[RMDB]
RNA sequence: GGGAACGACUCGAGUAGAGUCGAAAAAAGGCCGCCUCAGUUCCAAGCUCUUUCGUGGCACUGUAAACAGUCCUAUUGAGUUAGGGGCAGUCAACCACGUUGCGAAGCUAAAUUAUCUGGUCGAGAGUUACGAUUCCCUACUUCGGUAGGGAAUCAAACAAUAGCGAUUCUUCGGAAUCGCUAUUGUAAAAGAAACAACAACAACAAC
Reactivity to DMS in 0.01 (KOAc 150mM, MgCl2 10mM, bicine 150mM(pH8.5), 24C), signal-to-noise 1, nucleotides 027 to 156: a150a090g030g010c020c010g020c010c070u000c060a090g000u010u010c030c030a180a300g000c010u000c030u010u000u000c010g040u000g000g040c050a030c080u020g000u010a060a130a080c030a120g000u010c010c010u000a070u000u020g040a300g000u000u010a030g030g030g030g030c000a030g010u000c010a030a040c000c000a070c070g000u010u010g020c110g010a060a070g070c010u000a030a040a060u010u000a050u000c050u000g010g000u000c030g000a150g010a300g000u000u000a070c070g010a030u000u000c000c010c000u010a010c030u000u010c300g090g020u010a030g010g000g010a000a000u000c000a030a070
Reactivity to 2A3 in 0.01 (KOAc 150mM, MgCl2 10mM, bicine 150mM(pH8.5), 24C), signal-to-noise 1, nucleotides 027 to 156: a000a000g040g010c050c000g010c010c000u080c010a060g030u090u020c030c010a060a000g010c010u010c000u050u020u030c040g020u040g010g000c180a000c010u030g030u090a100a210a120c030a150g080u000c000c010u000a010u010u070g120a150g190u040u070a020g010g000g000g010c000a000g000u000c000a020a050c020c050a050c050g030u000u080g070c050g090a100a080g060c030u090a110a190a040u090u080a130u050c100u060g040g040u050c070g070a050g000a020g220u080u100a060c070g000a000u000u010c000c000c000u000a000c010u020u000c160g070g000u010a000g000g000g000a000a000u000c000a000a000